[RMDB]
RNA sequence: GGGAACGACUCGAGUAGAGUCGAAAAAUCCUCCCCUGAGAGGCCUCUUCCUAGGCCCGGAGUCUAUCUCCAUCUGGUCCGUCCGGGCCCUCUUCGCCGGGGGAGCCCCCUCUCCAUCCCUGUCCUUCCAGACCUGACUUCGGUCAGGUCAAAAGAAACAACAACAACAAC
Reactivity to 2A3 in 0.01 (KOAc 150mM, MgCl2 10mM, bicine 150mM(pH8.5), 24C), signal-to-noise 5, nucleotides 027 to 129: a020u040c000c000u000c020c010c000c020u060g020a060g000a010g060g020c010c010u060c050u100u040c000c010u040a000g000g000c010c000c020g000g020a020g020u020c080u080a100u060c040u010c070c050a130u050c080u130g030g020u000c020c020g070u000c010c020g010g000g020c030c000c020u060c060u160u110c040g100c070c030g000g000g000g010g000a000g000c020c010c000c030c010u010c000u040c010c030a070u060c000c000c030u030g040u090c030c040u070u020c010c010a000
Reactivity to DMS in 0.01 (KOAc 150mM, MgCl2 10mM, bicine 150mM(pH8.5), 24C), signal-to-noise 6, nucleotides 027 to 129: a060u040c000c000u000c050c020c020c000u050g020a090g040a060g050g000c070c040u030c100u000u000c050c040u020a160g000g000c020c030c080g020g010a040g020u050c070u040a110u010c040u010c000c080a000u050c080u060g020g050u040c140c110g040u040c050c080g040g000g000c030c030c050u020c080u040u020c120g030c140c050g040g000g040g120g000a090g010c040c040c090c020c000u010c020u020c020c060a110u030c020c030c010u030g010u030c060c080u050u050c050c030a240